[RMDB]
RNA sequence: GGGAACGACUCGAGUAGAGUCGAAAAGAUAUGGACACAAUCGAAGAUCAACCUCUGAUCGGAAACGAUCAGAGGGUUGAUUAGAUUGGUCCUAAGUCAAAGAUGUCCUUCUUCGGAAGGACAUCAAGCACUAACUUCAGUUCGCUGAAGUUAGUGCAAAAGAAACAACAACAACAAC
Reactivity to DMS in 0.01 (KOAc 150mM, MgCl2 10mM, bicine 150mM(pH8.5), 24C), signal-to-noise 1, nucleotides 027 to 126: g000a040u000a290u010g000g000a010c000a070c000a000a000u000c030g020a090a190g000a020u000c000a000a080c000c000u000c020u000g000a010u000c000g010g020a090a100a180c000g000a020u000c000a000g020a010g030g000g030u000u000g010a020u000u000a150g000a010u000u000g030g010u000c000c000u010a030a060g000u000c050a050a120a120g000a000u000g000u000c000c000u000u000c010u000u000c130g000g000a030a010g000g000a000c000a000u000c000a010a080
Reactivity to 2A3 in 0.01 (KOAc 150mM, MgCl2 10mM, bicine 150mM(pH8.5), 24C), signal-to-noise 2, nucleotides 027 to 126: g040a000u080a030u120g000g010a020c070a000c020a300a000u020c010g070a190a040g090a260u160c010a000a000c000c000u000c000u000g010a000u020c030g000g050a020a030a020c020g020a000u000c000a000g020a040g000g000g000u010u020g000a000u010u010a030g010a000u000u010g020g010u000c010c000u010a090a040g060u000c050a100a070a050g000a000u020g000u020c000c000u000u000c000u010u040c220g180g010a040a040g000g010a000c000a000u000c000a010a000
The data come from the RNA Mapping Database (RMDB), library TTRDEL.
This 177-nucleotide RNA was probed chemically with DMS and 2A3.
For DMS, 1,237 sequencing reads were counted.
2A3 adducts were read by reverse transcription with SuperScript II with manganese.